[RMDB]
RNA sequence: GGGAACGACUCGAGUAGAGUCGAAAAAUCAGCAAUAUGGGCAUUUCAUUUCCGCUUUGUCUGGAAAUGGGAGUUGUAAAAGUUUUUGAAAAAAAUAAUGGGAUUGAUGUGAACUCCAUUUAUGGCUCAGACGAUAUUUCAACUCUUGUUAAUCAGAAAAUGUACAACAGUUCGCUGUUGUACAUUUAAAAGAAACAACAACAACAAC
Reactivity to DMS in 0.01 (KOAc 150mM, MgCl2 10mM, bicine 150mM(pH8.5), 24C), signal-to-noise 1, nucleotides 027 to 156: a070u010c030a100g030c050a080a080u020a120u010g000g000g040c030a100u000u000u010c040a050u000u000u000c070c000g030c110u010u000u000g010u000c050u000g000g010a080a030a060u000g020g000g020a080g000u000u000g000u000a020a050a130a300g000u000u010u000u000u040g000a000a020a090a160a110a110a170u000a010a000u000g040g030g050a020u000u010g030a100u000g000u010g010a030a060c020u000c000c030a030u000u010u000a040u030g010g010c300u010c050a030g010a060c020g000a150u000a070u000u000u000c000a030a050c010u000c020u000u020g000u000u020a080a110u010c040a070g000a070
Reactivity to 2A3 in 0.01 (KOAc 150mM, MgCl2 10mM, bicine 150mM(pH8.5), 24C), signal-to-noise 1, nucleotides 027 to 156: a000u010c000a010g050c000a040a070u050a180u270g000g070g020c030a070u030u180u150c020a040u020u020u000c050c000g000c040u100u170u190g100u040c070u060g000g000a010a010a010u010g000g020g000a000g010u030u010g070u160a080a050a070a070g050u090u040u080u100u030g130a220a130a020a020a000a000a080u140a040a010u040g000g030g000a060u110u170g120a120u300g010u050g100a030a080c040u000c010c000a000u020u070u020a060u080g100g000c030u000c050a010g000a000c010g050a010u010a160u140u070u050c020a000a000c000u000c000u040u010g020u000u040a070a160u070c000a000g120a010
Notes
An RNA of 207 nucleotides, treated with DMS and 2A3 and read out base by base. Reactivities are given for positions 27 through 156. It was measured as part of the RMDB library OK3TST. 2A3 is a SHAPE reagent: it acylates the 2'-hydroxyl of flexible nucleotides of all four kinds.